[RMDB]
RNA sequence: GGGAACGACUCGAGUAGAGUCGAAAAGAUAUGGAAUGAUGGGAGCGAGGAUCACUGUCGGAAACGACAGUGGGAGCUCUCCAUUCAUUCCUAAGUCAAAACCCUAGAUGGUUCGCCAUCUAGGGAAGAGUCUUACAUGGUUCGCCAUGUAAGACUCAAAAGAAACAACAACAACAAC
Reactivity to DMS in 0.01 (KOAc 150mM, MgCl2 10mM, bicine 150mM(pH8.5), 24C), signal-to-noise 2, nucleotides 027 to 126: g010a050u000a300u000g000g000a050a000u000g020a050u000g000g000g010a010g010c020g000a140g010g010a050u000c000a000c000u010g010u020c000g030g030a140a130a210c000g010a010c000a000g010u000g000g010g020a050g020c000u010c010u010c000c030a020u010u010c000a020u000u000c000c000u020a030a110g010u020c040a120a080a140a150c010c000c010u000a000g000a000u010g020g000u000u020c250g020c020c010a000u000c000u010a010g000g000g010a000a040
Reactivity to 2A3 in 0.01 (KOAc 150mM, MgCl2 10mM, bicine 150mM(pH8.5), 24C), signal-to-noise 2, nucleotides 027 to 126: g020a010u070a050u150g000g000a000a030u000g030a000u020g010g020g020a030g000c010g090a300g150g010a010u020c000a010c000u010g000u000c010g010g000a090a040a050c000g000a000c010a000g010u010g000g000g000a010g000c000u000c020u030c010c000a010u070u080c000a000u000u000c000c000u000a080a040g060u050c040a020a060a100a300c000c000c000u000a010g000a000u000g040g050u090u100c230g040c120c000a010u010c000u010a000g000g030g000a000a050

Background
The record gives the reactivity of an RNA of 177 nucleotides to DMS and 2A3. The reactions ran in a buffer of 150 mM KOAc, 10 mM MgCl2 and 150 mM bicine (pH 8.5), at 24 C. The DMS profile rests on 2,352 reads. The 2A3 profile rests on 5,545 reads. High 2A3 reactivity points to a flexible backbone, as in loops and unpaired stretches. DMS adducts were read by reverse transcription with MarathonRT. Reactivities are given for positions 27 through 126.